The record gives the reactivity of an RNA of 177 nucleotides to 2A3.
Conditions: 150 mM KOAc, 10 mM MgCl2 and 150 mM bicine (pH 8.5), 24 C.
Source: RMDB library RFM100, as collected in RNAgym.
[RMDB]
RNA sequence: GGGAACGACUCGAGUAGAGUCGAAAAAGCAGCAUACGUGCUGCAGCGCCGUCUAAGUGAAUGCUUUGCCACAGUCUUCGACCAUGUCAAAUGAAGCCUGGGCUAAGAUUCGCUUAGGCCGGCGUAAGCCCCAAAUCCCCUUCGGGGGAUUUGGGGCAAAAGAAACAACAACAACAAC
Reactivity to 2A3 in 0.01 (KOAc 150mM, MgCl2 10mM, bicine 150mM(pH8.5), 24C), signal-to-noise 1, nucleotides 027 to 126: a020g000c030a010g000c000a010u060a090c150g110u030g000c000u000g000c000a000g000c000g000c000c000g000u020c000u010a000a010g000u000g000a010a010u090g200c030u000u000u010g010c000c000a290c000a090g030u000c010u000u000c000g060a160c060c120a120u230g030u300c070a060a130a300u210g000a000a000g000c040c000u000g000g000g000c000u020a000a000g000a000u000u000c040g010c000u010u010a010g000g000c000c000g030g030c000g010u010a020a020